This 177-nucleotide RNA was probed chemically with 2A3 and DMS. The data come from the RNA Mapping Database (RMDB), library RFMREP. DMS adducts were read by reverse transcription with MarathonRT. The 2A3 profile rests on 1,866 reads. For 2A3 the reverse transcriptase was SuperScript II with manganese.
[RMDB]
RNA sequence: GGGAACGACUCGAGUAGAGUCGAAAAUACUGUGCCAGCUGGUGGAUCGCUCGGCUUGAGAGCUGAAGAAGGACGUGCCAAGCUGCGAUAAGCCUCAGGGACCCGCACGGAGGGGAAGAACUGAGGAGUAAACCAUUAGGUUCGCCUAAUGGUUUACAAAAGAAACAACAACAACAAC
Reactivity to 2A3 in 0.01 (KOAc 150mM, MgCl2 10mM, bicine 150mM(pH8.5), 24C), signal-to-noise 1, nucleotides 027 to 126: u060a020c010u000g020u010g030c010c000a010g000c000u020g030g050u060g040g070a300u010c000g010c060u010c000g020g020c000u060u110g230a300g010a000g110c000u030g030a130a020g010a040a060g200g000a020c060g050u070g000c000c010a080a080g020c010u020g000c010g020a020u060a160a000g030c000c000u010c000a000g000g000g000a000c000c000c010g060c020a010c010g040g010a030g000g050g030g010a150a000g020a030a000c000u010g000a010g000g000a000
Reactivity to DMS in 0.01 (KOAc 150mM, MgCl2 10mM, bicine 150mM(pH8.5), 24C), signal-to-noise 3, nucleotides 027 to 126: u020a070c040u010g020u000g010c020c010a020g020c010u000g010g040u010g010g010a140u010c050g000c010u000c010g000g020c020u000u000g030a200g000a070g020c010u020g000a080a040g010a040a100g000g020a040c100g010u000g010c020c000a050a110g020c000u000g010c160g000a130u010a080a110g000c000c000u010c010a000g000g010g000a050c020c000c000g000c020a020c020g000g010a170g000g000g000g010a040a090g000a110a170c010u010g000a000g000g000a100
In probing experiments dimethyl sulfate is read out at A N1 and C N3, which are open when not base-paired.